[RMDB]
RNA sequence: GGGAACGACUCGAGUAGAGUCGAAAAGCAUCCAUAAGGAUCGACACCGCCAUUGCCCCCUGUACUGUACACGGUGGAGAUGUAUUGAUCGACAACGUCGACGGUUUGAGCAGCGGUAAUGUUGCCGCUCAGCAUGCAGUUUCGACUGCAUGCUGAGAAAAGAAACAACAACAACAAC
Reactivity to 2A3 in 0.01 (KOAc 150mM, MgCl2 10mM, bicine 150mM(pH8.5), 24C), signal-to-noise 1, nucleotides 027 to 126: g000c030a040u040c010c000a060u070a160a140g010g000a000u020c000g030a030c050a000c090c050g000c060c070a280u170u300g150c020c000c010c000c000u010g040u110a050c020u030g040u060a020c010a010c070g040g000u070g070g000a010g000a010u030g050u070a100u070u140g090a110u030c000g000a000c050a100a040c020g050u070c010g010a010c010g000g050u130u110u040g090a050g000c000a010g000c010g000g060u000a020a040u140g040u050u030g010c030c000g000
Reactivity to DMS in 0.01 (KOAc 150mM, MgCl2 10mM, bicine 150mM(pH8.5), 24C), signal-to-noise 3, nucleotides 027 to 126: g010c120a040u000c010c010a150u010a170a070g000g010a030u000c030g010a140c070a040c010c030g010c050c060a070u010u000g010c010c000c020c060c060u010g020u000a040c090u010g020u000a110c080a100c000g000g010u010g040g000a230g010a020u000g020u000a100u020u010g000a060u010c020g000a100c030a050a040c030g010u000c030g000a040c020g000g000u010u000u000g000a050g020c070a050g010c050g010g010u000a060a080u000g010u000u000g020c010c000g010